[RMDB]
RNA sequence: GGGAACGACUCGAGUAGAGUCGAAAAGAUAUGGAUUGUGGGAGCUACGUACUCGGAAACGAGUACUAUAGCAUCGAUCACACUGUCCUAAGUCAAAGUCCUAGGGGCGUUCGCGCCCCUAGGACAAGAUACUGUUACAGUUCGCUGUAACAGUAUCAAAAGAAACAACAACAACAAC
Reactivity to 2A3 in 0.01 (KOAc 150mM, MgCl2 10mM, bicine 150mM(pH8.5), 24C), signal-to-noise 5, nucleotides 027 to 126: g020a000u050a010u110g010g000a010u050u130g000u010g020g020g020a060g030c010u010a010c030g000u010a000c000u000c000g000g020a040a030a020c000g000a000g010u000a000c010u010a010u050a020g010c020a100u300c070g070a100u070c010a010c000a010c120u100g010u020c000c000u020a070a030g030u010c040a140a100a080g000u000c000c000u010a000g010g010g020g000c070g050u140u210c300g060c010g030c090c050c000c000u000a000g000g000a000c000a000a000
Reactivity to DMS in 0.01 (KOAc 150mM, MgCl2 10mM, bicine 150mM(pH8.5), 24C), signal-to-noise 7, nucleotides 027 to 126: g010a030u000a240u010g000g000a030u000u000g020u010g010g010g010a050g010c010u000a060c300g000u000a010c000u010c000g000g000a050a060a120c000g010a020g010u000a000c000u000a090u000a020g010c040a140u010c180g000a180u010c040a070c010a010c240u000g010u000c000c000u010a040a130g000u000c030a090a140a150g000u000c000c000u000a020g010g000g030g030c000g040u000u010c220g020c020g000c010c000c000c000u000a000g000g000a000c000a010a020